[RMDB]
RNA sequence: GGGAACGACUCGAGUAGAGUCGAAAACGUGUCCGUCGGCGUAGCCGACAACAUGCCCAGGUAGUCCAGACCUUCAAGGCUACGGUGCGUUGCGACGCACGGUCUGAUUCUUCACAACGACGUUCACAAGAUCGGAUCACUUUCGAGUGAUCCGAAACUCCUCGGAUAGUUUCGACUAUCCGAGGAGAAAAGAAACAACAACAACAAC
Reactivity to 2A3 in 0.01 (KOAc 150mM, MgCl2 10mM, bicine 150mM(pH8.5), 24C), signal-to-noise 1, nucleotides 027 to 156: c010g010u060g010u070c130c130g010u020c010g000g000c190g140u190a050g010c000c000g060a000c000a010a010c000a000u040g000c000c010c000a010g000g030u020a010g000u010c150c140a030g020a000c000c000u060u070c010a000a000g000g000c010u000a020c010g010g000u000g000c000g000u000u010g050c150g120a020c010g000c010a000c000g000g000u020c000u010g000a030u110u030c070u130u160c090a060c030a130a070c120g170a070c070g050u110u150c070a040c050a270a050g070a210u000c000g000g000a000u000c000a000c000u050u010u180c200g060a000g000u030g000a000u000c000c000g000a000a000a000
An RNA of 207 nucleotides, treated with 2A3 and read out base by base. Reactivities are rounded to 0.1 and cut off at 0 and 3. Source: RMDB library M2RFPK, as collected in RNAgym. 2A3 adducts were read by reverse transcription with SuperScript II with manganese. Reactivities are given for positions 27 through 156.